[RMDB]
RNA sequence: GGGAACGACUCGAGUAGAGUCGAAAAGCGCACGCUGUCCGGGGCCCGGAUCAUUGCCGAUCGACUGAUGGCUCCCGAUGUCGCCAAGGCCGGUGUGUCGGUGGUCAGCGGCGGCACCGACGUCCACCAGUAGCAGUGCUUUCGAGCACUGCUACUGAAAAGAAACAACAACAACAAC
Reactivity to DMS in 0.01 (KOAc 150mM, MgCl2 10mM, bicine 150mM(pH8.5), 24C), signal-to-noise 2, nucleotides 027 to 126: g010c040g020c060a070c080g000c030u000g020u000c030c040g040g010g010g010c030c010c040g000g010a030u000c020a090u000u020g010c220c070g000a050u000c020g000a200c060u020g000a120u010g030g000c020u010c080c010c040g010a060u010g020u010c020g000c050c030a170a270g010g020c040c050g000g000u000g010u010g010u000c010g000g030u000g010g000u000c040a040g020c120g010g010c000g000g020c010a030c010c020g010a060c030g000u000c030c030a170c230
Reactivity to 2A3 in 0.01 (KOAc 150mM, MgCl2 10mM, bicine 150mM(pH8.5), 24C), signal-to-noise 3, nucleotides 027 to 126: g020c030g060c010a020c120g000c070u050g000u050c030c000g010g010g020g010c050c010c000g010g000a030u050c060a090u030u300g080c100c080g070a050u020c050g180a140c050u190g060a140u130g090g000c010u090c000c000c000g000a020u050g100u130c030g010c060c040a060a050g140g030c050c020g070g020u080g000u020g060u050c060g050g060u060g040g030u030c030a010g040c000g070g000c000g010g020c010a000c000c010g030a050c040g040u030c010c020a080c000
Description
Source: RMDB library OK2TRN, as collected in RNAgym. The record gives the reactivity of an RNA of 177 nucleotides to DMS and 2A3. The RNA was probed in 150 mM KOAc, 10 mM MgCl2 and 150 mM bicine (pH 8.5) at 24 C. The DMS profile rests on 2,336 reads.